[RMDB]
RNA sequence: GGGAACGACUCGAGUAGAGUCGAAAAGCUAGCCGUACGCGGCCGCGUAGCAUGCAUAUCGUAAUAUUACGGCCGUAAUGCGCCGUAGCGCUAUAAUAUCGCGGCGCCGCGGCAUUACGCGCGCGGCCAGUGCCACGUAGUUCGCUACGUGGCACUGAAAAGAAACAACAACAACAAC
Reactivity to 2A3 in 0.01 (KOAc 150mM, MgCl2 10mM, bicine 150mM(pH8.5), 24C), signal-to-noise 2, nucleotides 027 to 126: g080c030u040a020g000c000c000g030u020a030c030g000c030g030g030c040c010g010c000g010u010a030g000c040a120u170g000c010a010u010a020u070c030g010u010a070a030u060a060u230u040a010c000g000g000c010c010g030u090a160a050u260g030c100g010c000c010g000u000a010g000c040g020c020u020a020u020a120a090u060a030u070c090g010c030g030g000c000g000c030c000g000c000g010g000c000a000u020u080a040c020g000c010g020c000g010c000g000g010c030
Reactivity to DMS in 0.01 (KOAc 150mM, MgCl2 10mM, bicine 150mM(pH8.5), 24C), signal-to-noise 2, nucleotides 027 to 126: g010c070u000a080g010c020c000g060u000a080c040g010c050g000g010c020c010g000c010g010u010a070g010c020a110u000g030c040a030u000a020u010c050g010u000a020a080u010a100u000u000a030c010g000g040c020c000g020u000a090a150u010g010c280g020c000c010g000u000a020g010c140g030c070u000a020u010a090a050u000a030u010c260g020c050g000g000c040g000c080c030g010c010g020g000c010a080u010u010a210c030g030c030g040c020g040c000g000g010c000
An RNA of 177 nucleotides, treated with 2A3 and DMS and read out base by base. 2A3 is a SHAPE reagent: it acylates the 2'-hydroxyl of flexible nucleotides of all four kinds. For 2A3, 3,548 sequencing reads were counted. Values cover nucleotides 27 to 126. For DMS, 2,427 sequencing reads were counted. DMS (dimethyl sulfate) methylates the pairing face of unpaired adenines and cytosines. The reactions ran in a buffer of 150 mM KOAc, 10 mM MgCl2 and 150 mM bicine (pH 8.5), at 24 C.